This 177-nucleotide RNA was probed chemically with 2A3 and DMS. The data come from the RNA Mapping Database (RMDB), library M2PK50. Values cover nucleotides 27 to 126. Conditions: 150 mM KOAc, 10 mM MgCl2 and 150 mM bicine (pH 8.5), 24 C. DMS adducts were read by reverse transcription with MarathonRT. For DMS, 11,236 sequencing reads were counted.

RNA sequence: GGGAACGACUCGAGUAGAGUCGAAAAAGCAGUCGAUUCGUCGACUGCUAAUGGGUCGGGACUACAUCACAGGUUCUUCGCUAGCCCUGUUUGGACCAGUAAAAAAGAGCUUAUUCGUAAGCUCUAAUAUCACUAAAAAAUUCGUUUUUUAGUGAUAAAAAGAAACAACAACAACAAC
Reactivity to 2A3 in 0.01 (KOAc 150mM, MgCl2 10mM, bicine 150mM(pH8.5), 24C), signal-to-noise 4, nucleotides 027 to 126: a000g000c000a000g010u000c000g010a010u050u050c070g030u010c000g100a020c000u000g000c000u000a000a040u060g030g000g020u040c020g000g000g030a020c010u100a040c080a090u140c050a030c030a100g050g030u060u030c020u060u060c020g020c070u050a060g010c000c010c010u020g030u050u070u060g030g010a010c010c040a030g110u160a040a100a060a030a010a000g000a000g000c000u010u010a020u070u080c140g060u030a010a000g000c000u000c000u000a010a010
Reactivity to DMS in 0.01 (KOAc 150mM, MgCl2 10mM, bicine 150mM(pH8.5), 24C), signal-to-noise 7, nucleotides 027 to 126: a030g010c000a000g010u000c000g000a030u000u010c180g020u000c000g010a010c000u000g010c000u000a010a020u000g010g010g020u000c030g010g000g010a190c030u000a060c140a060u010c130a060c130a110g010g000u000u000c020u000u000c070g020c070u010a090g010c110c010c010u000g010u000u010u010g010g010a090c020c020a090g020u010a000a040a060a080a080a030g000a020g010c000u000u000a020u000u010c180g020u000a010a010g000c000u000c000u000a020a070